This 177-nucleotide RNA was probed chemically with DMS.

RNA sequence: GGGAACGACUCGAGUAGAGUCGAAAAUUUUAAUUGGACUCUGGGAAGACGAUGUUCAGAAAUCCGUUAUGGAGGCUAGAAGCUAUACACCUGGCAUCUUCGUUUUCUAGAUGUAUCUAGUCAAGGGUGCCUACAGGAUAUUCGUAUCCUGUAGGCAAAAAGAAACAACAACAACAAC
Reactivity to DMS in 0.01 (KOAc 150mM, MgCl2 10mM, bicine 150mM(pH8.5), 24C), signal-to-noise 2, nucleotides 027 to 126: u000u010u000u010a060a100u010u000g020g000a040c040u030c010u020g020g020g000a020a010g000a010c050g000a010u000g020u000u010c050a050g000a090a110a120u000c010c030g000u010u000a110u020g000g020a050g000g020c020u000a050g010a120a130g010c070u000a090u020a090c230a080c170c010u000g000g000c050a030u000c040u000u010c040g000u000u000u000u000c000u000a040g000a050u000g010u000a100u020c040u010a020g010u000c060a080a090g020g010g010